[RMDB]
RNA sequence: GGGAACGACUCGAGUAGAGUCGAAAAUGGUUACUGACCGUGCUAUUGAGCGGAUACUCGUCGCUGGGAGCGAUUGUCAGUGCACUGAUUGCUCCGUUUUAUGUCUGGUGGUUUAAGCCACAAUUCACUCACGAGCAUACUUCGGUAUGCUCGUGAGAAAAGAAACAACAACAACAAC
Reactivity to 2A3 in 0.01 (KOAc 150mM, MgCl2 10mM, bicine 150mM(pH8.5), 24C), signal-to-noise 2, nucleotides 027 to 126: u040g000g000u040u090a030c020u090g070a010c030c010g070u020g010c030u100a080u250u090g050a010g000c010g060g000a010u080a160c030u050c100g100u010c000g000c070u120g050g000g000a000g020c020g100a050u030u120g070u050c040a050g090u010g090c080a000c070u000g040a070u000u100g040c050u000c000c000g020u060u070u080u040a170u060g040u000c050u040g070g010u010g050g050u070u070u280a070a030g030c030c000a010c010a010a020u020u060c060a030
Reactivity to DMS in 0.01 (KOAc 150mM, MgCl2 10mM, bicine 150mM(pH8.5), 24C), signal-to-noise 3, nucleotides 027 to 126: u010g010g010u000u020a040c030u000g000a070c150c130g000u010g010c050u000a070u000u000g000a180g010c030g000g020a130u000a050c120u000c070g010u000c030g020c020u000g010g010g000a040g020c030g030a040u000u010g020u010c020a110g030u000g020c230a040c030u000g020a070u000u010g010c070u000c020c020g010u010u000u000u000a100u000g010u000c060u000g020g020u000g000g000u020u000u000a110a150g020c030c010a010c030a060a050u010u000c090a130
Chemical mapping of a 177-nucleotide RNA with 2A3 and DMS. The RNA was probed in 150 mM KOAc, 10 mM MgCl2 and 150 mM bicine (pH 8.5) at 24 C. As a SHAPE reagent, 2A3 marks flexible, mostly unpaired nucleotides at the ribose 2'-OH. Values cover nucleotides 27 to 126. For DMS the reverse transcriptase was MarathonRT.